[RMDB]
RNA sequence: GGGAACGACUCGAGUAGAGUCGAAAAACUCUCACCAGCUACGGUACUGUAGCUGAUUCUCGAGGAGUAGUGUCCGAGACUCAGGACACGAGUCUCGCUAGUACUGAACUAGCAGUACUCGUGGAGUACAGUACCGUACUCCACCGAGAGUGAGAGAGUCCACGUGAGUAUUCGUACUCACGUGGACAAAAGAAACAACAACAACAAC
Reactivity to 2A3 in 0.01 (KOAc 150mM, MgCl2 10mM, bicine 150mM(pH8.5), 24C), signal-to-noise 2, nucleotides 027 to 156: a000c000u000c000u030c000a010c000c030a030g080c090u010a020c010g020g020u040a020c050u050g010u030a050g060c000u000g000a020u020u000c000u000c010g170a090g000g060a010g040u130a030g080u110g090u100c010c000g030a040g000a030c050u020c030a010g040g060a070c000a000c040g000a000g000u000c000u010c050g010c000u000a000g010u030a120c110u220g050a210a030c030u020a000g000c000a000g040u070a000c000u000c010g000u000g030g040a030g070u000a010c020a000g000u030a000c040c010g000u000a010c010u040c040c040a170c040c030g080a060g000a080g020u020g010a000g000a010g000a030
Source: RMDB library OK3TST, as collected in RNAgym. The record gives the reactivity of an RNA of 207 nucleotides to 2A3. The reactions ran in a buffer of 150 mM KOAc, 10 mM MgCl2 and 150 mM bicine (pH 8.5), at 24 C. As a SHAPE reagent, 2A3 marks flexible, mostly unpaired nucleotides at the ribose 2'-OH.